[RMDB]
Source: RMDB library OK1LIB, as collected in RNAgym. This 177-nucleotide RNA was probed chemically with DMS and 2A3. DMS (dimethyl sulfate) methylates the pairing face of unpaired adenines and cytosines. Reactivities are given for positions 27 through 126. For 2A3 the reverse transcriptase was SuperScript II with manganese. DMS adducts were read by reverse transcription with MarathonRT. The RNA was probed in 150 mM KOAc, 10 mM MgCl2 and 150 mM bicine (pH 8.5) at 24 C.
RNA sequence: GGGAACGACUCGAGUAGAGUCGAAAACUCCAGCUGAAUCGAAGCGAGUAUCGAUUCAGAGAUCUGACUUGAUGCUUACGCUUAACACAACUCAAUGUUGUGAUAGCUGGCACAUUGAGUAAUGUACGAUGUACAGUUAUUUCGAUAAUUGUACAUCAAAAGAAACAACAACAACAAC
Reactivity to DMS in 0.01 (KOAc 150mM, MgCl2 10mM, bicine 150mM(pH8.5), 24C), signal-to-noise 9, nucleotides 027 to 126: c060u010c000c010a100g010c010u010g000a050a040u030c100g010a030a050g010c130g010a130g000u020a040u000c000g010a010u000u000c000a000g010a190g010a120u050c040u000g010a050c060u000u000g000a020u000g010c020u010u020a110c170g010c010u000u010a080a080c030a010c020a010a010c000u000c270a120a070u030g010u000u000g010u000g010a090u020a010g010c010u000g000g010c110a100c050a030u010u010g000a050g000u020a070a070u020g000u010a100c170
Reactivity to 2A3 in 0.01 (KOAc 150mM, MgCl2 10mM, bicine 150mM(pH8.5), 24C), signal-to-noise 9, nucleotides 027 to 126: c020u000c010c000a020g000c010u030g050a040a060u070c050g020a040a000g080c040g050a030g060u050a040u020c000g000a000u000u000c000a000g020a010g040a100u140c040u070g060a030c010u020u030g010a020u020g050c020u090u130a060c070g010c010u050u060a120a010c010a000c000a030a030c000u050c060a090a120u210g000u030u010g000u040g010a020u060a020g000c010u010g010g000c010a010c000a040u030u060g050a030g040u090a090a110u120g040u080a030c090